[RMDB]
An RNA of 177 nucleotides, treated with DMS and 2A3 and read out base by base. For 2A3 the reverse transcriptase was SuperScript II with manganese. DMS adducts were read by reverse transcription with MarathonRT. Source: RMDB library OK1LIB, as collected in RNAgym.
RNA sequence: GGGAACGACUCGAGUAGAGUCGAAAACUGCACUACGACUGCGAGUAGGUGUCCGGUGUCGGGAGAUCGGACGGACACUACCGAUGACGAUGAUGCAACUCAGUAUCGGAGUGCAUUUGAAUGCAGGGCGGUAUUGGUCCUUCGGGAUCGAUAUCGCAAAAGAAACAACAACAACAAC
Reactivity to DMS in 0.01 (KOAc 150mM, MgCl2 10mM, bicine 150mM(pH8.5), 24C), signal-to-noise 9, nucleotides 027 to 126: c020u000g010c000a020c090u010a270c030g000a060c050u010g010c050g000a120g010u010a030g010g020u010g010u010c000c000g000g010u030g010u010c000g010g010g000a170g010a110u010c020g000g000a060c010g000g000a010c010a040c000u000a020c010c010g000a080u010g010a060c030g010a160u010g000a020u000g000c020a040a070c020u010c000a100g010u030a090u030c150g010g000a040g010u000g000c010a010u000u010u010g010a120a100u010g000c020a020g000g000
Reactivity to 2A3 in 0.01 (KOAc 150mM, MgCl2 10mM, bicine 150mM(pH8.5), 24C), signal-to-noise 9, nucleotides 027 to 126: c000u000g000c000a000c020u100a020c020g070a020c020u050g020c020g000a050g010u010a020g000g190u010g000u000c000c000g020g020u100g070u030c010g000g010g030a080g010a060u080c000g000g020a000c000g000g000a000c010a000c010u010a010c000c000g030a030u040g030a010c020g020a020u120g000a000u030g000c000a040a100c010u000c000a010g030u040a090u080c030g050g000a000g000u010g000c000a000u020u010u070g060a050a010u040g000c010a010g020g040